[RMDB]
RNA sequence: GGGAACGACUCGAGUAGAGUCGAAAAACAGUGAUCAAGAACAAGAACAACGUGCCCUUUCUGCUGCUUUCGGGUUCUCCCAUCACCAACACGCCGAUCACGCUCUCGAACAUCAUCAGCAUCAUGUCCGACGAGGGCAUAAACUUCAGCGAUAUCAAGGAAUAAUACUGUUCGCAGUAUUAUUCCUAAAAGAAACAACAACAACAAC
Reactivity to 2A3 in 0.01 (KOAc 150mM, MgCl2 10mM, bicine 150mM(pH8.5), 24C), signal-to-noise 8, nucleotides 027 to 156: a000c040a020g040u040g040a060u090c060a060a060g070a080a100c050a080a050g060a080a030c060a060a060c110g070u070g020c010c000c000u010u070u030c060u040g020c010u010g010c010u020u060u080c050g040g000g000u100u020c040u020c010c010c000a060u100c020a030c040c020a050a080c050a020c100g040c020c030g010a030u040c010a010c090g010c000u010c000u010c020g050a060a050c020a100u120c010a030u030c030a040g060c000a030u090c020a030u100g040u040c030c020g030a100c060g020a120g010g000g000c000a000u030a000a030a010c020u090u060c040a030g020c020g080a040u040a040u210c070a080
Reactivity to DMS in 0.01 (KOAc 150mM, MgCl2 10mM, bicine 150mM(pH8.5), 24C), signal-to-noise 4, nucleotides 027 to 156: a040c040a090g030u000g000a120u020c040a110a150g010a090a120c070a090a110g010a100a130c050a070a070c060g010u000g010c020c020c030u000u000u000c020u000g010c020u010g010c040u000u000u000c030g010g040g040u000u000c050u000c000c020c000a150u000c080a100c050c020a050a110c070a110c050g000c000c020g000a090u000c050a090c040g030c020u000c020u000c000g000a060a060c070a040u020c060a090u000c060a130g000c090a160u010c050a050u000g010u000c010c010g020a150c070g000a140g000g010g020c010a030u000a030a050a070c040u010u000c020a060g040c040g030a150u000a110u000c050a140